[RMDB]
RNA sequence: GGGAACGACUCGAGUAGAGUCGAAAACGUGGCCGGCCGUCAAUUCGCGUUGCCCUCGCCAUGCUCGGGCACGCAGUCGUCCCUGCCUGCCUCGAUCACGCCGCCGACGACGGCGACGGCGGGCGCACCUCAUCCAUCGUUUCGACGAUGGAUGAGGAAAAGAAACAACAACAACAAC
Reactivity to 2A3 in 0.01 (KOAc 150mM, MgCl2 10mM, bicine 150mM(pH8.5), 24C), signal-to-noise 2, nucleotides 027 to 126: c020g020u070g070g030c000c020g120g000c000c030g030u070c030a060a110u160u110c090g020c000g110u130u140g050c000c000c020u010c020g080c100c070a130u220g000c070u080c030g000g040g040c000a010c000g010c000a000g020u040c050g020u010c000c020c000u020g000c000c000u020g000c020c020u100c080g080a140u100c030a010c070g010c010c010g020c000c000g130a090c060g000a030c020g050g000c030g020a000c010g020g000c040g010g010g000c020g000c000a040
Reactivity to DMS in 0.01 (KOAc 150mM, MgCl2 10mM, bicine 150mM(pH8.5), 24C), signal-to-noise 1, nucleotides 027 to 126: c130g020u000g000g010c010c070g030g000c020c010g000u000c070a100a140u010u010c150g010c040g020u000u000g010c010c000c010u000c110g000c030c130a060u000g000c110u000c190g010g000g020c020a030c040g010c040a120g000u000c050g010u000c030c070c010u010g000c020c040u000g010c010c000u010c100g010a140u000c040a090c080g010c020c020g000c050c050g000a090c030g010a130c020g030g000c150g010a000c040g000g000c010g000g030g000c040g030c080a190

The record gives the reactivity of an RNA of 177 nucleotides to 2A3 and DMS. For 2A3 the reverse transcriptase was SuperScript II with manganese. The 2A3 profile rests on 2,182 reads.